[RMDB]
RNA sequence: GGGAACGACUCGAGUAGAGUCGAAAAUGGUAAAACAGGAUCAGUAAUGUCAACCUCAGUAACCGUUACUGACGAGAAGUAUGUACUAUUAGCUGCCGGUUACGAAAGCGGUCAUGUGGUUCAGUAACUGGAUUAUGGGAUUCGUCCCAUAAUCCAGAAAAGAAACAACAACAACAAC
Reactivity to 2A3 in 0.01 (KOAc 150mM, MgCl2 10mM, bicine 150mM(pH8.5), 24C), signal-to-noise 2, nucleotides 027 to 126: u030g010g000u070a110a020a050a020c070a030g010g010a120u050c010a000g050u090a090a060u030g010u030c040a070a020c020c000u100c060a000g040u060a020a000c010c000g010u020u050a000c010u030g060a070c040g080a050g020a140a040g070u120a060u210g140u080a030c000u010a080u120u090a030g020c000u020g010c040c010g000g000u070u060a020c010g070a040a030a000g020c030g000g100u060c020a030u040g000u010g070g040u020u040c010a030g030u050a040a120
Reactivity to DMS in 0.01 (KOAc 150mM, MgCl2 10mM, bicine 150mM(pH8.5), 24C), signal-to-noise 3, nucleotides 027 to 126: u010g020g030u010a070a090a070a130c050a080g000g010a100u000c010a050g000u000a040a060u010g020u010c050a080a040c060c060u000c110a190g000u000a040a090c090c020g010u000u000a030c020u010g000a050c040g010a090g020a110a120g010u010a060u000g000u000a040c070u000a100u000u000a070g030c090u010g010c170c030g020g000u010u000a040c030g010a060a170a080g000c190g000g000u000c040a010u000g040u010g020g000u000u000c050a040g000u010a090a140